[RMDB]
RNA sequence: GGGAACGACUCGAGUAGAGUCGAAAAAAAAAAGAUAUGGAACGGUUGGUCGCGACGAUCAUGACGUAACAUCAAUCGGAAACGAUUGUGGUCAUGGGAGCGAAGAGACCGUUCCUAAGUCAAAAAAUCUGAGAGUAAUGUUCGCAUUACUCUCAGAAAAAGAAACAACAACAACAAC
Reactivity to 2A3 in 0.01 (KOAc 150mM, MgCl2 10mM, bicine 150mM(pH8.5), 24C), signal-to-noise 1, nucleotides 027 to 126: a010a010a020a010a030a050g030a010u060a000u070g040g010a000a000c020g020g060u060u010g110g110u080c010g000c000g060a300c000g020a150u010c000a000u000g010a010c040g040u020a120a060c080a190u300c020a050a000u010c000g010g040a000a010a000c020g010a010u000u000g010u010g030g000u000c000a010u000g000g040g000a020g010c000g020a010a030g070a030g020a040c000c000g000u000u000c000c000u000a000a000g010u000c000a000a030a030a070a090a200
Reactivity to DMS in 0.01 (KOAc 150mM, MgCl2 10mM, bicine 150mM(pH8.5), 24C), signal-to-noise 2, nucleotides 027 to 126: a000a020a100a080a150a160g000a030u000a080u010g020g000a000a000c010g010g000u010u000g010g010u000c020g050c000g010a080c240g000a040u010c000a000u000g000a010c000g030u000a090a030c230a010u000c000a000a000u000c000g010g000a050a030a010c000g000a000u030u010g040u000g000g000u000c000a010u000g000g000g000a010g030c000g000a030a090g030a260g000a010c000c000g000u000u000c000c000u000a000a080g000u010c010a000a070a090a070a060a090